[RMDB]
RNA sequence: GGGAACGACUCGAGUAGAGUCGAAAAAGUGAUUUAUGGACAUGUGAGGUGGCUGCCCGCUAGCAGCGCCGGGGUAAAGCCUGCGCGCGCUGGCGAAUUCCCCGCAGUCACCCGGCCCCCGAGCCCUCUUCCAGUUGGAUUUCGAUCCAACUGGAAGAAAAGAAACAACAACAACAAC
Reactivity to 2A3 in 0.01 (KOAc 150mM, MgCl2 10mM, bicine 150mM(pH8.5), 24C), signal-to-noise 2, nucleotides 027 to 126: a000g110u080g030a140u140u100u300a230u270g050g040a030c100a060u150g080u140g080a100g000g000u000g000g010c000u010g000c010c040c010g000c000u000a000g010c120a050g000c000g000c030c050g010g000g000g010u100a060a060a040g130c000c000u040g000c060g010c000g010c030g000c070u000g000g020c000g000a000a020u090u080c010c000c000c000g030c000a000g000u000c000a010c010c000c000g010g000c000c010c000c000c000g020a010g040c000c000c000u020